[RMDB]
Structure probing data (DMS and 2A3) for a 177-nucleotide construct. For 2A3 the reverse transcriptase was SuperScript II with manganese. The 2A3 profile rests on 2,438 reads. For DMS the reverse transcriptase was MarathonRT.
RNA sequence: GGGAACGACUCGAGUAGAGUCGAAAAGAUAUGGAGCUUCAGAGGAACUACGUCAAGAUGAGUGUCGGAAACGACAUUGAGACGCCGACGAAGAAGCUCCUAAGUCAAAUCUACCUUCGGGUAGAAAUCAUAUAAAUGCGUUCGCGCAUUUAUAUGAAAAAGAAACAACAACAACAAC
Reactivity to DMS in 0.01 (KOAc 150mM, MgCl2 10mM, bicine 150mM(pH8.5), 24C), signal-to-noise 3, nucleotides 027 to 126: g020a030u000a300u000g000g010a010g000c000u000u000c000a050g000a300g020g030a130a110c060u010a120c030g000u000c010a060a190g000a210u010g000a040g010u000g000u010c010g010g020a050a040a090c010g020a000c000a030u000u000g010a260g010a010c020g010c080c160g020a110c020g000a300a230g000a020a010g000c000u000c010c000u000a000a060g010u000c000a070a090a190u000c000u000a000c000c000u000u000c200g030g000g020u000a000g010a010a060a140
Reactivity to 2A3 in 0.01 (KOAc 150mM, MgCl2 10mM, bicine 150mM(pH8.5), 24C), signal-to-noise 3, nucleotides 027 to 126: g010a000u070a050u110g010g000a000g000c010u000u020c010a030g070a060g120g080a210a170c140u200a060c300g000u000c040a040a040g100a250u300g170a050g160u060g030u030c000g000g030a020a040a020c000g010a000c000a000u020u120g030a100g000a020c000g000c110c100g180a280c030g010a060a100g010a020a000g010c000u000c000c010u000a040a000g000u000c010a020a010a300u030c000u010a010c000c000u010u060c300g180g000g000u010a000g020a040a040a020
Source: RMDB library TTRDEL, as collected in RNAgym.